RNA sequence: GGGAACGACUCGAGUAGAGUCGAAAACCCUGGGCGCCGCCGCGAUUGCAGCACUGCCGGCCAUCGCGCAGACCGCUCCGCCACAGGGGCAAGGCGCCAGCGCGCAGAAGGCCAAUGACGAGAAGGCCUAGCCCUAAAGAUUCGUCUUUAGGGCUAGAAAAGAAACAACAACAACAAC
Reactivity to DMS in 0.01 (KOAc 150mM, MgCl2 10mM, bicine 150mM(pH8.5), 24C), signal-to-noise 9, nucleotides 027 to 126: c010c000c010u020g010g000g010c010g020c010c020g010c130c020g010c010g000a020u000u000g010c030a090g010c070a180c090u020g010c040c040g020g000c020c060a020u000c010g020c010g000c080a140g000a120c220c160g010c000u000c000c010g010c160c130a110c210a110g010g000g010g030c020a150a100g000g010c010g000c020c000a040g010c080g000c100g010c030a050g010a140a060g000g010c000c000a100a110u010g010a110c080g000a110g000a130a120g000g000c020
Reactivity to 2A3 in 0.01 (KOAc 150mM, MgCl2 10mM, bicine 150mM(pH8.5), 24C), signal-to-noise 7, nucleotides 027 to 126: c000c000c000u020g040g020g000c010g000c010c020g040c020c000g010c010g020a020u010u060g010c010a020g020c020a050c220u180g040c040c030g040g000c010c000a030u030c000g000c000g000c010a000g050a050c020c070g000c010u020c000c010g090c080c070a210c060a100g020g000g000g000c020a030a080g020g010c010g000c000c010a020g010c020g000c020g000c010a020g010a150a020g050g000c010c010a070a110u160g050a080c090g030a040g050a200a050g040g000c000